[RMDB]
RNA sequence: GGGAACGACUCGAGUAGAGUCGAAAAAAAUUUUGAGAUCUUUAGCAAUGCAAGCUGGAAAUGCUUUAGGUGGUUGUAAGUGGAGUUUAAUGGCUAAUUCUUGUGGGAGCUCAGAGGAUCAGAAUGCGUUAUUACCCUUCUUCGGAAGGGUAAUAACAAAAGAAACAACAACAACAAC
Reactivity to DMS in 0.01 (KOAc 150mM, MgCl2 10mM, bicine 150mM(pH8.5), 24C), signal-to-noise 1, nucleotides 027 to 126: a050a110a070u000u000u000u010g010a100g000a050u010c020u000u010u010a050g000c040a070a060u010g020c070a020a020g030c070u000g020g010a080a070a120u000g020c040u000u010u010a070g020g010u000g010g000u000u000g010u000a040a070g000u000g020g010a050g000u010u000u000a070a080u010g010g010c030u010a030a070u000u000c030u010u010g020u010g030g000g000a060g020c040u000c110a030g000a110g000g000a040u000c050a050g010a080a050u000g010c210